[RMDB]
RNA sequence: GGGAACGACUCGAGUAGAGUCGAAAAAAGCAAGAGAAUCACAGAUCUCAACAAAACCUACCUUGUUUCUUGCUGUGAGAAUGUGAUGUUUCCUUCAGAGUAUGGAACAAGGCUCGAGAAGGGGUUACCUGUAGCUUAGGUUCGCCUAAGCUACAGGAAAAGAAACAACAACAACAAC
Reactivity to DMS in 0.01 (KOAc 150mM, MgCl2 10mM, bicine 150mM(pH8.5), 24C), signal-to-noise 2, nucleotides 027 to 126: a070a030g000c100a060a080g000a060g020a120a040u010c030a020c090a090g000a100u000c010u000c010a030a070c140a070a050a080a090c070c050u010a090c050c020u000u000g020u000u000u000c020u000u000g010c000u000g000u040g000a070g000a070a050u010g030u010g000a030u000g010u000u000u000c010c010u000u020c020a160g020a020g010u000a030u000g000g020a110a060c060a050a060g000g020c060u000c100g000a110g020a050a040g000g000g010g000u000u000a080
Reactivity to 2A3 in 0.01 (KOAc 150mM, MgCl2 10mM, bicine 150mM(pH8.5), 24C), signal-to-noise 2, nucleotides 027 to 126: a000a010g100c100a140a010g040a040g010a160a030u050c030a030c020a130g100a260u050c010u010c010a030a080c050a010a110a010a020c000c030u060a030c020c000u070u050g020u040u000u010c030u040u020g050c040u020g080u050g140a030g030a050a020u080g010u090g020a070u070g070u070u210u030c000c000u010u030c000a000g000a000g090u030a010u110g020g000a040a000c010a070a100g030g000c030u030c040g260a200g030a010a020g000g030g010g020u010u020a080